This 177-nucleotide RNA was probed chemically with DMS and 2A3. For DMS the reverse transcriptase was MarathonRT. The reactions ran in a buffer of 150 mM KOAc, 10 mM MgCl2 and 150 mM bicine (pH 8.5), at 24 C. Source: RMDB library TTRDES, as collected in RNAgym.
RNA sequence: GGGAACGACUCGAGUAGAGUCGAAAAGAUAUGGAGCACACUGUGCGAGACGUGGGUCGGAAACGACCUUAUCGUCGAUGAGCAUUGUGCUCCUAAGUCAAAAGACGCAGCGUUCGCGCUGCGUCAAGAUCUAGCGUAAGUUCGCUUACGCUAGAUCAAAAGAAACAACAACAACAAC
Reactivity to DMS in 0.01 (KOAc 150mM, MgCl2 10mM, bicine 150mM(pH8.5), 24C), signal-to-noise 3, nucleotides 027 to 126: g000a030u000a020u010g000g000a020g030c010a000c000a020c300u000g010u000g010c000g000a040g010a000c000g030u000g010g010g010u000c010g020g000a010a000a030c000g020a010c000c000u000u010a010u010c010g030u000c000g010a130u010g000a070g010c000a010u000u000g020u010g000c000u000c000c000u000a000a030g000u000c000a150a090a120a130g000a020c010g000c000a010g000c010g040u010u000c270g030c020g030c000u000g000c000g010u010c010a020a080
Reactivity to 2A3 in 0.01 (KOAc 150mM, MgCl2 10mM, bicine 150mM(pH8.5), 24C), signal-to-noise 4, nucleotides 027 to 126: g010a000u000a000u040g000g000a000g010c000a000c020a010c130u090g030u050g100c060g050a090g010a030c010g000u020g000g000g010u000c000g000g000a010a010a010c010g000a000c020c030u020u110a270u230c000g020u000c010g050a250u300g020a000g000c000a010u000u040g000u010g000c000u020c000c000u000a000a000g000u000c000a020a020a020a200g000a000c000g000c000a000g020c020g050u090u220c270g030c000g020c170u000g020c030g000u000c000a000a000